[RMDB]
RNA sequence: GGGAACGACUCGAGUAGAGUCGAAAAAAAAGUAAAUGCGAAUAACAUCGUUAACUUUGCUCGUAAGGAUGCUCUAGUAGCUGCCUAAACACCUCUUAUAGGUUCGAGCGUCUUUAGUUUGACUCCGUUAAGGACUGAAGACCAAACCCCAACGGAUCGUCAACUAACAGUUCGCUGUUAGUUGACGAAAAGAAACAACAACAACAAC
Reactivity to 2A3 in 0.01 (KOAc 150mM, MgCl2 10mM, bicine 150mM(pH8.5), 24C), signal-to-noise 2, nucleotides 027 to 156: a000a000a000a000g140u210a190a150a110u300g020c010g020a040a040u140a220a030c060a150u020c010g010u020u000a020a020c010u050u010u100g000c000u010c010g010u050a040a020g020g010a010u030g010c000u000c040u030a110g030u220a010g100c060u120g080c010c000u060a110a070a040c060a030c020c040u110c080u200u180a160u180a300g000g010u030u020c010g000a000g020c000g000u010c010u010u000u000a000g000u000u000u090g010a000c010u000c010c020g010u000u000a010a010g000g000a000c000u010g000a000a000g000a020c010c050a080a030a030c010c010c020c000a000a000c000g000g000a040u040

Conditions: 150 mM KOAc, 10 mM MgCl2 and 150 mM bicine (pH 8.5), 24 C.
This 207-nucleotide RNA was probed chemically with 2A3.
Values cover nucleotides 27 to 156.